[RMDB]
RNA sequence: GGGAACGACUCGAGUAGAGUCGAAAAUACGUUGAGAAUUCUGGCCAGGAACAAAUCCUUCCUCGCGGCUAGACACGGAUUGCACGCCCUUUGGCAAGGGAUAGUUCUCUAUUCCGCACCGUGCCCUGUUGUGGCAACCGUCUUUCCUCCGUCGUAACUAUCAAAUUUCGUUCGCGAAAUUUGAUAGAAAAGAAACAACAACAACAAC
Reactivity to DMS in 0.01 (KOAc 150mM, MgCl2 10mM, bicine 150mM(pH8.5), 24C), signal-to-noise 1, nucleotides 027 to 156: u000a070c050g040u000u000g010a160g000a110a160u000u000c020u000g030g060c000c030a090g020g060a040a260c020a020a110a110u000c060c220u010u000c020c010u010c050g000c070g020g020c050u000a020g010a080c100a030c000g010g010a120u000u010g020c030a170c050g000c010c010c200u000u020u000g030g040c030a210a180g000g050g010a040u000a020g070u000u010c210u010c040u020a090u010u010c010c020g060c100a090c040c020g000u010g040c000c020c040u010g000u010u000g020u010g000g040c030a050a090c050c010g020u010c030u010u010u000c010c000u000c020c030g000u010c070g000u000a130a220
Reactivity to 2A3 in 0.01 (KOAc 150mM, MgCl2 10mM, bicine 150mM(pH8.5), 24C), signal-to-noise 1, nucleotides 027 to 156: u110a030c040g020u010u060g060a050g020a210a200u120u000c020u010g020g000c000c000a030g010g030a010a070c060a110a210a180u080c000c040u020u000c010c030u030c080g100c070g000g000c040u000a010g020a010c020a000c050g030g020a120u050u140g000c020a030c020g010c000c000c000u060u150u200g030g010c060a060a040g000g000g010a000u040a010g110u280u060c210u000c000u110a020u000u050c010c030g000c020a030c010c010g070u040g030c020c010c010u120g030u110u090g040u080g040g000c020a010a070c030c040g050u020c000u010u050u010c000c010u050c050c030g070u060c010g000u100a010a060
The data come from the RNA Mapping Database (RMDB), library ARCHII. This 207-nucleotide RNA was probed chemically with DMS and 2A3. 2A3 adducts were read by reverse transcription with SuperScript II with manganese. The 2A3 profile rests on 878 reads.